[RMDB]
RNA sequence: GGGAACGACUCGAGUAGAGUCGAAAAGACUUUCUCUCAAGUCUAUCCUAAACUUUUCAUUGGCGAAAACGAUCGUUCUUUGGUUGAGAGUUGGGUGGAAACUGCCUCUGCCUUAGCUGGUAACCACAACUUUCUUGAGCUUUCUUCACUUCUUGCAGCCCGUUUUAUUAUUCGUAAUAAAACGGGCAAAAGAAACAACAACAACAAC
Reactivity to 2A3 in 0.01 (KOAc 150mM, MgCl2 10mM, bicine 150mM(pH8.5), 24C), signal-to-noise 2, nucleotides 027 to 156: g010a010c000u090u080u050c100u030c000u000c080a000a000g000u030c020u000a060u000c000c000u030a150a090a030c060u000u130u210u230c070a090u060u190g040g010c020g020a090a010a060a060c070g060a080u050c040g020u080u060c040u060u070u160g060g010u040u060g050a060g000a010g090u000u040g030g020g010u040g010g020a060a050a100c100u070g040c010c020u030c040u040g010c020c030u070u180a050g040c080u050g040g040u070a060a020c010c040a030c070a040a060c010u070u110u060c030u030u080g030a020g020c050u050u040u090c020u160u160c050a040c030u080u000c030u050u160g140c020a020

Chemical mapping of a 207-nucleotide RNA with 2A3. The reactions ran in a buffer of 150 mM KOAc, 10 mM MgCl2 and 150 mM bicine (pH 8.5), at 24 C. The data come from the RNA Mapping Database (RMDB), library OK3TST.